[RMDB]
RNA sequence: GGGAACGACUCGAGUAGAGUCGAAAAUAAAAUGGUAAGAACGGUUCCAAAGGAGCCGAAGGUCAUAGCUAUGGCAUCGAUGUAAAAUCUUAUCAAUUAGGUGACGAGCUUGGCACUGAUCAAAAAACAAACAGUUGAUCUUCGGAUCAACUGUUUGAAAAGAAACAACAACAACAAC
Reactivity to 2A3 in 0.01 (KOAc 150mM, MgCl2 10mM, bicine 150mM(pH8.5), 24C), signal-to-noise 2, nucleotides 027 to 126: u140a010a090a010a060u060g020g040u030a050a030g010a220a030c000g010g000u000u010c020c000a130a200a220g010g000a010g000c010c010g040a010a020g070g000u010c000a020u080a040g000c000u100a150u160g020g000c010a020u040c060g070a000u040g020u150a000a090a160a100u030c070u100u140a100u040c030a050a150u080u080a070g090g000u020g040a030c030g010a010g050c030u030u010g020g000c040a030c060u040g040a040u130c040a090a090a040a040a030a020
Reactivity to DMS in 0.01 (KOAc 150mM, MgCl2 10mM, bicine 150mM(pH8.5), 24C), signal-to-noise 1, nucleotides 027 to 126: u010a040a050a080a160u010g010g000u000a000a070g010a140a220c020g030g000u000u000c000c010a130a180a210g090g010a010g000c000c000g000a040a040g010g030u000c020a030u010a080g000c030u000a030u000g010g000c000a050u020c040g030a050u000g000u020a030a060a140a050u000c080u010u020a110u000c070a090a110u000u000a110g020g000u000g010a060c030g000a060g000c070u000u000g000g020c000a090c130u000g000a070u010c040a000a000a030a030a030a070
Structure probing data (2A3 and DMS) for a 177-nucleotide construct.
2A3 adducts were read by reverse transcription with SuperScript II with manganese.
The RNA was probed in 150 mM KOAc, 10 mM MgCl2 and 150 mM bicine (pH 8.5) at 24 C.